[RMDB]
RNA sequence: GGGAACGACUCGAGUAGAGUCGAAAACGGACGGGAUUUUAGCCGGGUUGCAAGUUUACCCAUUUCGUGCUGGGUCCUGGACCCACUUAAGAUAAUAGAAAUAUUAUCGAUUUCUUUACCGUCCGGAAUACCGAUCGGAUUUCGAUCCGAUCGGUAUAAAAGAAACAACAACAACAAC
Reactivity to DMS in 0.01 (KOAc 150mM, MgCl2 10mM, bicine 150mM(pH8.5), 24C), signal-to-noise 1, nucleotides 027 to 126: c020g010g000a010c000g010g000g000a050u000u000u000u000a060g010c180c160g000g000g020u010u020g010c070a080a100g020u020u000u010a040c010c000c000a060u000u020u000c240g010u020g010c220u000g000g010g010u010c160c070u010g030g000a050c010c000c010a080c080u010u000a100a160g000a010u000a000a010u000a000g000a160a060a160u000a000u000u000a000u000c000g000a100u020u010u010c080u000u000u000a220c000c000g010u000c000c000g040g000a090

Chemical mapping of a 177-nucleotide RNA with DMS. The reactions ran in a buffer of 150 mM KOAc, 10 mM MgCl2 and 150 mM bicine (pH 8.5), at 24 C. For DMS the reverse transcriptase was MarathonRT. Values cover nucleotides 27 to 126. Source: RMDB library OK2TRN, as collected in RNAgym.